[RMDB]
RNA sequence: GGGAACGACUCGAGUAGAGUCGAAAAGAUAGUGUGUCUACCAGCGAUUUAGGUAGUCUCAUUGAUUGUAAUGCGGCUUCAGUUAACCAAAUUGUCUUGCGUAAUUCUAAUGGUGCUUGCAUUUGGACAUCCUAAUUGCGUUCGCGCAAUUAGGAUGAAAAGAAACAACAACAACAAC
Reactivity to 2A3 in 0.01 (KOAc 150mM, MgCl2 10mM, bicine 150mM(pH8.5), 24C), signal-to-noise 1, nucleotides 027 to 126: g020a020u090a000g060u030g000u010g020u000c010u000a000c000c010a030g060c080g170a190u030u080u270a040g020g000u000a010g010u000c000u030c010a030u080u020g110a090u060u130g050u190a060a030u040g000c020g040g040c000u040u010c030a120g060u040u060a080a020c000c000a050a040a030u100u070g060u040c070u020u030g000c010g060u050a080a070u180u070c040u090a180a000u130g000g000u030g000c010u000u060g010c010a000u020u020u000g000g030a040
Reactivity to DMS in 0.01 (KOAc 150mM, MgCl2 10mM, bicine 150mM(pH8.5), 24C), signal-to-noise 2, nucleotides 027 to 126: g000a090u000a050g010u010g020u000g000u000c020u000a030c020c010a160g000c190g000a140u010u010u000a060g020g020u000a020g000u000c020u000c010a020u000u000g020a080u010u010g040u010a020a060u010g010c060g020g010c030u000u000c040a080g030u010u010a120a120c050c040a030a020a080u000u000g010u010c040u000u000g020c060g020u000a050a060u010u010c150u000a090a080u000g010g000u000g010c050u000u000g010c030a080u000u000u000g000g000a250

This 177-nucleotide RNA was probed chemically with 2A3 and DMS. The RNA was probed in 150 mM KOAc, 10 mM MgCl2 and 150 mM bicine (pH 8.5) at 24 C. For DMS the reverse transcriptase was MarathonRT.